[RMDB]
RNA sequence: GGGAACGACUCGAGUAGAGUCGAAAAGGUGAGCACUUCCACUGGCUUUCUGUGCGAAAAGACCGAGAAGAGCUUUGGUGGAGCAAUGCUCCAGCUUUUCCGGGACGAGCAGCUGCGUGUAAAGAUGCGAGGUGCGCUAGUUCGCUAGCGCACCUCGAAAAGAAACAACAACAACAAC
Reactivity to 2A3 in 0.01 (KOAc 150mM, MgCl2 10mM, bicine 150mM(pH8.5), 24C), signal-to-noise 1, nucleotides 027 to 126: g140g170u010g050a010g000c000a000c000u030u000c020c000a050c020u010g000g000c050u060u020u000c020u100g050u040g100c000g050a150a000a160a000g190a010c000c020g120a060g000a080a000g080a000g000c000u080u110u180g140g000u160g020g000a000g010c060a230a300u190g010c000u000c000c000a000g000c050u070u000u020u010c020c000g000g000g010a080c040g000a000g000c000a000g000c040u000g050c020g090u070g060u120a000a130a020g000a090u200g090
Conditions: 150 mM KOAc, 10 mM MgCl2 and 150 mM bicine (pH 8.5), 24 C. Structure probing data (2A3) for a 177-nucleotide construct. For 2A3, 436 sequencing reads were counted. For 2A3 the reverse transcriptase was SuperScript II with manganese. Source: RMDB library OK1LIB, as collected in RNAgym.